[RMDB]
The record gives the reactivity of an RNA of 177 nucleotides to 2A3 and DMS. 2A3 is a SHAPE reagent: it acylates the 2'-hydroxyl of flexible nucleotides of all four kinds. The 2A3 profile rests on 936 reads.
RNA sequence: GGGAACGACUCGAGUAGAGUCGAAAACGCCGCGGUAAUACCGGCAGUCCAAGUGAUGGCCGAUAUUAUUGGGCCUAAAGCGUCCGUAGCUUGCUGUGUAAGUCCAUUGGGAAAUCGACCAGCUCAAGAAAUGUGAGCGAUUCGUCGCUCACAUUUCAAAAGAAACAACAACAACAAC
Reactivity to 2A3 in 0.01 (KOAc 150mM, MgCl2 10mM, bicine 150mM(pH8.5), 24C), signal-to-noise 2, nucleotides 027 to 126: c040g000c000c020g060c020g020g000u020a000a000u000a020c000c000g000g000c010a000g030u010c000c000a190a120g080u150g180a010u050g060g000c000c000g000a000u000a010u000u020a000u000u080g050g010g050c050c040u120a120a090a000g030c050g000u000c030c010g030u030a000g040c060u010u100g030c010u020g000u010g010u120a040a040g030u050c050c010a070u060u120g140g020g000a050a060a120u070c030g050a040c000c050a040g000c000u030c070a080a100
Reactivity to DMS in 0.01 (KOAc 150mM, MgCl2 10mM, bicine 150mM(pH8.5), 24C), signal-to-noise 1, nucleotides 027 to 126: c230g000c000c020g000c060g000g000u000a060a000u020a030c030c000g020g000c000a150g000u010c000c030a090a170g000u050g000a020u010g000g020c030c000g020a000u000a000u020u000a000u020u060g030g030g000c020c120u010a070a030a170g030c020g000u020c070c030g020u000a090g020c110u030u040g000c000u000g020u000g040u080a100a200g000u000c020c030a110u030u000g030g070g040a020a010a080u010c080g000a110c000c030a070g000c010u000c130a030a140